[RMDB]
RNA sequence: GGGAACGACUCGAGUAGAGUCGAAAAGAUAUGGAUGUCGUAGACAUGCUUAGUAAUCGGAAACGAUUACAGAGCAACAGCUACUGACAUCCUAAGUCAAAUCCCUAAAGGUUCGCCUUUAGGGAAAUCAAGCGUUACUGUUCGCAGUAACGCUUGAAAAAGAAACAACAACAACAAC
Reactivity to DMS in 0.01 (KOAc 150mM, MgCl2 10mM, bicine 150mM(pH8.5), 24C), signal-to-noise 2, nucleotides 027 to 126: g000a010u000a070u000g000g000a000u000g040u000c000g010u000a000g030a050c070a250u020g010c000u000u000a170g020u000a000a010u020c000g000g020a010a030a060c000g010a020u000u000a000c000a300g020a010g000c010a070a040c230a140g010c000u000a000c000u040g010a010c000a000u000c000c000u010a000a090g010u000c000a090a200a090u000c010c010c020u000a040a000a000g010g010u000u000c300g020c000c000u000u020u000a010g000g000g020a000a000a030